Chemical mapping of a 177-nucleotide RNA with DMS. For DMS the reverse transcriptase was MarathonRT. Conditions: 150 mM KOAc, 10 mM MgCl2 and 150 mM bicine (pH 8.5), 24 C.
[RMDB]
RNA sequence: GGGAACGACUCGAGUAGAGUCGAAAAAUGUUGGCCAUGCUGGUCUCAAACUCCUGACCUCGUGUGAUCCCCCUGCUUCAGCCUCUCAAACUGCUGGGAUUAUAGGCAUGAGCCACUGCGCCUGGCCUACCUCUUCAUCCUUCGGGAUGAAGAGGUAAAAAGAAACAACAACAACAAC
Reactivity to DMS in 0.01 (KOAc 150mM, MgCl2 10mM, bicine 150mM(pH8.5), 24C), signal-to-noise 2, nucleotides 027 to 126: a040u000g000u000u000g000g010c030c010a080u000g000c130u010g030g000u000c010u000c090a020a140a110c050u000c020c060u000g000a090c060c020u010c070g020u020g010u000g000a120u010c030c010c020c090c070u000g000c070u010u010c070a110g000c020c010u000c020u000c050a050a050a180c130u000g010c070u000g020g010g020a070u000u000a070u010a060g020g020c050a050u000g000a110g010c010c030a030c090u000g000c120g010c010c030u000g010g010c020c110